Chemical mapping of a 177-nucleotide RNA with 2A3 and DMS.
It was measured as part of the RMDB library RFMREP.
As a SHAPE reagent, 2A3 marks flexible, mostly unpaired nucleotides at the ribose 2'-OH.
The RNA was probed in 150 mM KOAc, 10 mM MgCl2 and 150 mM bicine (pH 8.5) at 24 C.
The DMS profile rests on 1,071 reads.
The 2A3 profile rests on 1,729 reads.
RNA sequence: GGGAACGACUCGAGUAGAGUCGAAAAGGAAUGAGAGGGAGAGCGCAGCAUCUGGCUCCACACGAUCAUCCAGUACAUUUCACCACAUUGUCUGCAGCUCACCUCGCAGGAAUCACUUCGGUGAGCGGAGACCUUACUAGUUCGCUAGUAAGGUCUCAAAAGAAACAACAACAACAAC
Reactivity to 2A3 in 0.01 (KOAc 150mM, MgCl2 10mM, bicine 150mM(pH8.5), 24C), signal-to-noise 2, nucleotides 027 to 126: g060g030a140a120u090g000a020g000a030g050g000g020a260g000a010g080c060g010c080a000g000c010a060u070c040u030g020g030c000u030c070c010a040c010a020c040g010a040u060c000a010u040c030c000a040g040u030a060c040a070u040u070u080c140a080c040c010a010c040a070u070u120g090u130c000u050g020c000a020g000c000u000c010a010c020c000u010c020g050c020a020g030g100a080a110u100c040a020c090u030u070c180g090g010u060g000a010g000c040g030
Reactivity to DMS in 0.01 (KOAc 150mM, MgCl2 10mM, bicine 150mM(pH8.5), 24C), signal-to-noise 2, nucleotides 027 to 126: g000g010a150a090u000g010a060g010a100g000g020g020a100g000a040g020c050g000c020a030g000c050a150u000c100u000g000g030c020u000c040c030a090c090a060c090g000a080u010c080a060u000c020c000a040g000u000a130c050a030u000u000u000c050a150c010c030a020c140a090u000u030g010u010c020u020g000c050a110g020c000u010c010a090c000c020u030c050g000c030a020g000g000a120a140u000c110a050c030u000u010c150g050g000u000g000a040g050c180g000